[RMDB]
RNA sequence: GGGAACGACUCGAGUAGAGUCGAAAAUUGGCAGUAGGUCCUUUCAUGUUGCCAACUGCACAAGCUGUAUCUUUGAAAGGAAGUAAAAUGGUAAAAGUGGAACCACUAAUUAGGCCCGGCAUACCCCGAUGGCGUAUAUGUUCGCAUAUACGCCAUCAAAAGAAACAACAACAACAAC
Reactivity to DMS in 0.01 (KOAc 150mM, MgCl2 10mM, bicine 150mM(pH8.5), 24C), signal-to-noise 3, nucleotides 027 to 126: u000u010g010g030c010a070g000u020a050g000g000u010c070c020u000u010u000c030a100u000g010u010u010g020c050c010a040a100c060u000g000c100a100c170a060a060g000c060u000g000u000a060u010c050u000u000u000g000a040a030a030g010g010a050a140g000u010a020a050a070a090u000g010g010u000a030a030a070a100g000u000g010g010a090a050c070c030a030c050u030a040a140u010u000a100g010g020c020c040c020g010g010c080a090u000a170c040c010c030c210
Reactivity to 2A3 in 0.01 (KOAc 150mM, MgCl2 10mM, bicine 150mM(pH8.5), 24C), signal-to-noise 2, nucleotides 027 to 126: u040u010g000g020c010a000g000u030a000g040g090u040c010c030u000u070u050c050a070u050g020u100u060g020c000c000a000a010c030u080g030c020a050c040a200a080g040c020u040g020u120a090u040c020u000u080u040g040a090a010a030g070g090a050a000g010u080a010a110a090a110u120g040g040u070a020a080a070a130g050u060g100g020a100a120c040c020a020c050u030a010a110u040u040a090g000g040c020c010c000g000g000c000a050u060a110c030c030c010c040